[RMDB]
RNA sequence: GGGAACGACUCGAGUAGAGUCGAAAAGCAACGAGCGUAAUCGCGUCUUCACUAGGGAGACUGUAGGUGACGUGAGUAUCUAUCCCAGUGUGCAUAGCGCACAAUACGCUGAUCUACAGUCAAUUAAGAUAGAUCCGGAUUUCGAUCCGGAUCUAUCAAAAGAAACAACAACAACAAC
Reactivity to DMS in 0.01 (KOAc 150mM, MgCl2 10mM, bicine 150mM(pH8.5), 24C), signal-to-noise 3, nucleotides 027 to 126: g020c080a160a100c060g000a110g010c020g000u000a080a090u020c030g010c050g000u000c020u010u000c120a140c160u010a120g030g020g000a130g000a010c010u010g010u010a000g000g000u000g000a010c010g000u000g000a190g010u000a040u000c110u000a130u000c010c000c010a160g000u000g020u000g000c020a180u000a090g000c170g010c010a040c040a030a080u000a050c020g010c020u000g020a070u000c030u000a040c010a000g020u000c020a090a070u010u010a050a130
Reactivity to 2A3 in 0.01 (KOAc 150mM, MgCl2 10mM, bicine 150mM(pH8.5), 24C), signal-to-noise 3, nucleotides 027 to 126: g040c030a020a050c030g050a010g010c000g020u060a070a080u060c030g010c030g030u010c010u120u100c050a130c230u210a090g110g030g100a080g030a030c010u070g030u030a030g000g040u010g010a000c010g020u030g030a030g000u070a080u100c070u070a070u030c000c000c020a000g060u010g000u000g000c070a170u150a220g040c030g000c040a000c000a010a030u130a050c050g030c040u050g030a040u040c010u050a050c000a010g010u020c020a030a080u190u090a180a020